[RMDB]
RNA sequence: GGGAACGACUCGAGUAGAGUCGAAAAUGCAUUGACUUUCGAGUCAAUGCAAAAAAUCCUAAGUCUCCUAAGACAGGACAUGACGUGUGUCGGAAACGACACCGUCAACAGCUCGAGGAGAUAUGGAAAAAAAGGGCAGACUUUCGAGUCUGCCCAAGUGAAGAAUAAGGUUCGCCUUAUUCUUCACAAAAGAAACAACAACAACAAC
Reactivity to DMS in 0.01 (KOAc 150mM, MgCl2 10mM, bicine 150mM(pH8.5), 24C), signal-to-noise 2, nucleotides 027 to 156: u000g020c020a040u000u020g020a020c000u000u000u020c180g070a040g000u000c000a020a000u000g030c000a000a000a050a060a050a080u000c050c000u030a060a150g040u010c010u020c000c020u010a130a100g000a100c110a110g020g020a100c060a300u010g000a010c030g010u010g050u000g010u010c000g000g080a200a180a220c030g010a030c010a000c000c010g000u010c000a000a050c070a150g030c050u000c060g000a050g020g000a020g000a070u010a120u000g020g000a000a030a060a030a090a180a190g000g060g020c000a030g000a020c000u010u000u010c210g030a060g030u010c000u020g010c000c000c010a000a030
Reactivity to 2A3 in 0.01 (KOAc 150mM, MgCl2 10mM, bicine 150mM(pH8.5), 24C), signal-to-noise 3, nucleotides 027 to 156: u080g010c000a000u010u000g000a000c010u060u100u110c170g010a000g010u000c000a010a000u020g000c000a020a000a000a000a000a030u070c050c000u030a100a020g010u020c010u010c010c000u080a200a120g050a080c040a060g100g050a070c070a200u090g000a000c020g210u230g000u010g000u250c010g020g020a100a100a050c010g000a000c000a000c000c000g000u010c000a010a010c030a010g040c020u030c020g010a000g010g000a010g020a020u020a050u060g010g080a040a030a020a010a000a060a160g010g010g000c000a010g020a030c000u050u090u160c260g060a050g010u010c000u000g000c020c010c000a000a000